[RMDB]
RNA sequence: GGGAACGACUCGAGUAGAGUCGAAAACUGCCCUACACUGGGGGACAACACUUAGAAAUGAGUGCUAAUACCCCAUACUCCUACCUAACAUAAGUUAGGUAGGGAAAGUUUUUCGGUGUAGGAUGAGGCGAGACAUGCUCUUCGGAGCAUGUCUCGCAAAAGAAACAACAACAACAAC
Reactivity to 2A3 in 0.01 (KOAc 150mM, MgCl2 10mM, bicine 150mM(pH8.5), 24C), signal-to-noise 2, nucleotides 027 to 126: c030u080g000c000c000c000u000a000c000a000c000u010g000g000g000g000g000a000c050a020a060c000a020c000u000u000a010g190a120a110a060u280g000a020g050u000g050c030u040a040a020u150a270c000c000c000c000a010u000a000c020u020c000c000u000a020c020c000u000a000a000c000a230u300a300a150g000u000u000a000g020g000u000a000g000g000g000a000a000a000g000u000u000u000u040u240c080g000g010u000g010u000a000g050g000a020u090g020a010g020

This 177-nucleotide RNA was probed chemically with 2A3. The reactions ran in a buffer of 150 mM KOAc, 10 mM MgCl2 and 150 mM bicine (pH 8.5), at 24 C. Source: RMDB library RFM100, as collected in RNAgym.